[RMDB]
RNA sequence: GGGAACGACUCGAGUAGAGUCGAAAAGCAGUUCGUGAAGAUCGUAUGCGUGGUGGCCGCAACAAAUUUGGCUCGUAUUAUAAACGUGAUCGUGCACAACGCAUGCAGCGUAUAGCGCUUCGAGCUACCCGUGACUCCGAUUCGUCGGAGUCACGGGAAAAGAAACAACAACAACAAC
Reactivity to 2A3 in 0.01 (KOAc 150mM, MgCl2 10mM, bicine 150mM(pH8.5), 24C), signal-to-noise 1, nucleotides 027 to 126: g000c010a030g030u040u030c030g100u260g230a110a010g000a140u160c060g020u080a040u020g000c030g000u030g050g020u090g070g060c000c030g060c020a080a070c070a050a180a050u150u090u050g030g000c000u000c060g000u000a030u130u190a170u190a040a150a020c030g010u010g030a200u130c040g080u070g000c000a010c020a110a100c140g020c000a020u000g000c020a040g000c000g010u050a050u120a290g160c020g000c000u060u030c020g000a010g000c000u060a060
Reactivity to DMS in 0.01 (KOAc 150mM, MgCl2 10mM, bicine 150mM(pH8.5), 24C), signal-to-noise 1, nucleotides 027 to 126: g030c150a120g000u000u000c010g030u000g000a070a090g000a050u000c120g000u040a020u010g000c000g050u010g040g000u000g000g040c000c070g070c130a060a140c230a050a050a100u030u030u000g030g010c030u000c030g010u000a010u000u010a110u000a070a070a010c070g010u000g000a140u010c060g010u010g000c020a040c070a080a090c030g000c010a080u000g000c080a180g060c010g000u000a050u000a070g010c040g070c010u030u000c030g070a000g000c000u000a120